[RMDB]
Background
The record gives the reactivity of an RNA of 177 nucleotides to DMS and 2A3.
RNA sequence: GGGAACGACUCGAGUAGAGUCGAAAAGGACUUAUCCCUGGUGUGACGAAAUCAAGCUGGUAGGAGAGGGGUAUGAGCGUAUCGGAUCCCAUUGCAGAUAUGCUGACGAAGAUCAGAAAUGCCUCGCUCCUACAUGCUAGUUCGCUAGCAUGUAGGAAAAAGAAACAACAACAACAAC
Reactivity to DMS in 0.01 (KOAc 150mM, MgCl2 10mM, bicine 150mM(pH8.5), 24C), signal-to-noise 7, nucleotides 027 to 126: g010g000a120c120u010u000a100u000c020c010c010u000g020g030u010g010u010g030a070c060g000a050a080a110u010c100a080a090g010c050u010g020g010u000a040g020g000a060g010a060g000g000g000g020u000a040u000g000a070g020c040g010u000a020u000c000g000g000a100u000c040c030c040a160u010u010g020c080a110g000a040u000a040u010g000c010u000g010a090c060g000a110a100g010a120u010c060a070g000a050a090a060u010g000c020c010u000c030g010c090
Reactivity to 2A3 in 0.01 (KOAc 150mM, MgCl2 10mM, bicine 150mM(pH8.5), 24C), signal-to-noise 4, nucleotides 027 to 126: g070g020a050c040u080u070a040u130c000c000c000u010g040g030u040g040u050g050a060c040g060a070a030a070u130c060a050a020g050c060u090g090g040u070a030g030g040a060g010a000g010g040g000g010u050a070u110g070a030g010c040g010u030a010u020c010g000g080a050u060c010c030c040a040u070u160g000c010a000g020a020u050a020u110g020c010u030g000a010c090g160a160a070g020a190u050c040a010g050a070a140a040u050g000c020c010u020c020g000c000
Values cover nucleotides 27 to 126. The 2A3 profile rests on 4,390 reads. It was measured as part of the RMDB library OK2TRN. For DMS the reverse transcriptase was MarathonRT.